Source information:
Structure probing data (2A3 and DMS) for a 207-nucleotide construct. The DMS profile rests on 4,465 reads. Reactivities are given for positions 27 through 156. Source: RMDB library OK3TST, as collected in RNAgym. Values are in units of 0.01, from 0 to 300, in steps of 10. The 2A3 profile rests on 1,570 reads.

RNA sequence: GGGAACGACUCGAGUAGAGUCGAAAAGCCUGGCAUGGUUGUGCAUGCCUGUAGUCUCAGCUACUCUGGAGGCUGAGGCAGGAGAAUCGCUUGAACCCAGGAGGCAGAGGUUACAAUGAGCUGAGAUCGUGCCACUGCACUCACUCCAGCCUGGGCAGAUUAAUAUAGCUUUCGAGCUAUAUUAAUCAAAAGAAACAACAACAACAAC
Reactivity to 2A3 in 0.01 (KOAc 150mM, MgCl2 10mM, bicine 150mM(pH8.5), 24C), signal-to-noise 3, nucleotides 027 to 156: g030c000c020u000g020g010c020a050u000g000g040u030u150g070u100g090c000a010u040g010c010c000u030g090u080a080g010u010c000u000c000a010g000c000u030a050c020u060c050u090g050g030a040g080g000c010u000g010a010g020g000c030a010g040g040a090g030a030a140u100c110g000c080u040u100g010a070a050c020c000c010a010g000g030a020g020g070c000a020g000a030g080g040u120u230a030c060a120a160u250g020a080g060c150u100g070a080g000a150u080c060g040u050g020c020c000a040c020u030g000c010a110c110u060c000a080c010u010c020c030a020g010c000c040u030g000g010g020c030a000
Reactivity to DMS in 0.01 (KOAc 150mM, MgCl2 10mM, bicine 150mM(pH8.5), 24C), signal-to-noise 2, nucleotides 027 to 156: g030c050c020u000g040g020c010a080u000g010g040u010u010g030u010g030c020a030u010g040c000c000u000g020u000a080g020u000c010u000c000a040g020c010u000a060c030u010c060u000g040g050a220g020g000c010u000g000a020g020g020c010a060g020g010a100g030a110a130u010c060g010c050u020u000g010a070a040c000c000c010a090g010g010a300g010g020c050a110g000a070g000g020u000u010a060c020a060a040u000g020a120g040c020u000g010a120g030a080u000c090g060u010g000c030c080a070c060u000g020c020a090c040u000c040a080c030u020c000c020a080g000c020c010u000g010g050g030c070a110